[RMDB]
This 207-nucleotide RNA was probed chemically with DMS and 2A3. DMS adducts were read by reverse transcription with MarathonRT. For 2A3, 1,728 sequencing reads were counted. For 2A3 the reverse transcriptase was SuperScript II with manganese. The reactions ran in a buffer of 150 mM KOAc, 10 mM MgCl2 and 150 mM bicine (pH 8.5), at 24 C.

RNA sequence: GGGAACGACUCGAGUAGAGUCGAAAAGUGCCGGCAAUACAGUGUGUAUGGAGGUCUCAAUGGGUCGGAAGUGCCAGCAAACCGGCGUAGAUAUUAGCAGACGUAUGGGCGUAAGACUUUUAUUGAAAAAAGUACAUAAGCUUCGGCUUAUGUACAAGUAGCUACAGUAGUUCGCUACUGUAGCUACAAAAGAAACAACAACAACAAC
Reactivity to DMS in 0.01 (KOAc 150mM, MgCl2 10mM, bicine 150mM(pH8.5), 24C), signal-to-noise 2, nucleotides 027 to 156: g030u000g020c000c020g020g000c010a090a110u000a090c080a140g010u000g010u010g030u000a020u000g030g000a140g030g010u000c040u000c040a040a160u000g010g000g020u000c040g040g020a060a060g020u000g020c010c000a100g000c040a040a120a100c020c000g000g060c010g020u000a070g020a110u000a060u000u000a090g030c000a080g020a120c080g000u000a090u000g010g000g000c010g000u010a080a110g000a110c020u000u010u000u000a120u030u030g000a000a030a100a080a070a220g020u010a000c000a000u000a020a000g000c000u000u020c300g040g020c000u000u000a000u010g000u000a000c000a010a050
Reactivity to 2A3 in 0.01 (KOAc 150mM, MgCl2 10mM, bicine 150mM(pH8.5), 24C), signal-to-noise 3, nucleotides 027 to 156: g050u010g000c000c010g000g000c070a060a030u080a100c040a080g070u020g010u000g000u200a070u050g040g010a010g030g040u000c020u010c050a090a160u140g030g030g000u050c040g030g010a060a000g020u060g090c030c030a020g050c050a010a030a060c020c010g020g000c010g050u080a030g000a060u070a040u180u140a020g030c010a020g020a070c030g030u100a060u060g030g010g020c010g010u030a010a080g030a020c020u080u090u080u150a190u120u210g010a080a100a020a040a020a020g000u010a000c000a000u000a010a000g000c020u010u070c230g010g000c000u020u000a000u000g000u000a000c000a000a000